[RMDB]
RNA sequence: GGGAACGACUCGAGUAGAGUCGAAAAUUGUGGUGAAGACCUUGGCGUAGUAUCCAAGGUUGUCAAGGUUCCUAUUGACUUAACAAUGAUUGAGUUUAUGUUAUGGUGUAAGGAUGGACAGGGGAAAGUUUCCAACGGUAUUCGUACCGUUGGAAACAAAAGAAACAACAACAACAAC
Reactivity to DMS in 0.01 (KOAc 150mM, MgCl2 10mM, bicine 150mM(pH8.5), 24C), signal-to-noise 4, nucleotides 027 to 126: u000u000g020u000g020g020u000g010a120a120g010a010c000c000u000u010g000g000c300g000u000a170g020u020a180u010c010c000a020a020g010g000u010u010g020u010c030a060a080g010g010u000u000c020c010u000a100u000u010g010a050c020u000u000a040a050c040a060a060u030g000a110u000u010g010a100g000u000u000u000a040u020g000u000u000a040u000g000g030u000g010u000a070a070g000g010a070u000g010g010a050c050a090g000g000g000g000a100a060a090
Reactivity to 2A3 in 0.01 (KOAc 150mM, MgCl2 10mM, bicine 150mM(pH8.5), 24C), signal-to-noise 2, nucleotides 027 to 126: u030u040g020u040g110g060u090g050a100a020g040a030c000c000u010u000g000g000c040g070u120a040g090u000a210u030c020c010a020a040g000g000u000u030g000u010c010a000a000g050g000u020u030c000c020u010a110u050u120g020a010c000u040u010a070a020c100a080a300u160g050a200u110u070g040a050g150u070u050u070a080u070g080u080u070a070u090g020g020u020g000u050a040a040g040g000a010u050g020g000a020c000a020g000g000g000g020a050a200a040

The record gives the reactivity of an RNA of 177 nucleotides to DMS and 2A3.
The 2A3 profile rests on 1,371 reads.
The RNA was probed in 150 mM KOAc, 10 mM MgCl2 and 150 mM bicine (pH 8.5) at 24 C.
For DMS, 3,827 sequencing reads were counted.
High DMS reactivity at an A or C suggests that its Watson-Crick edge is free.
For DMS the reverse transcriptase was MarathonRT.